[RMDB]
RNA sequence: GGGAACGACUCGAGUAGAGUCGAAAAAAACGAAAGUGAGGUUUCCUAGACUUUGAAUCUUGGGAGUUAACUUGGGACAGGUGGUUCUGUAAACCAUGAAGCUGCAUUAGGGCUAGUUACAGAGAACAUUCACCACUUGAUUCGUCAAGUGGUGAAUAAAAGAAACAACAACAACAAC
Reactivity to DMS in 0.01 (KOAc 150mM, MgCl2 10mM, bicine 150mM(pH8.5), 24C), signal-to-noise 4, nucleotides 027 to 126: a030a050a060c090g010a070a060a070g010u010g010a110g010g000u000u000u000c010c000u000a100g000a040c050u000u010u000g010a110a130u010c020u010u010g020g010g010a050g010u010u010a090a060c080u000u000g000g000g000a080c050a060g010g030u000g020g000u000u010c030u000g010u000a040a060a040c060c040a080u010g010a080a060g020c040u000g000c070a080u000u000a110g000g010g020c050u000a090g000u000u000a030c050a040g010a140g010a050a080c200
Reactivity to 2A3 in 0.01 (KOAc 150mM, MgCl2 10mM, bicine 150mM(pH8.5), 24C), signal-to-noise 1, nucleotides 027 to 126: a050a030a000c000g010a030a010a020g050u000g070a090g000g130u000u000u060c020c000u020a040g000a030c030u110u090u250g080a090a040u000c020u000u130g000g000g000a030g030u010u080a030a020c020u070u020g040g000g030a030c030a040g040g070u080g020g040u110u000c020u050g080u060a110a060a050c020c010a020u070g060a030a000g030c060u070g040c050a120u020u220a040g000g130g030c030u020a010g040u030u000a010c020a000g080a010g000a070a020c000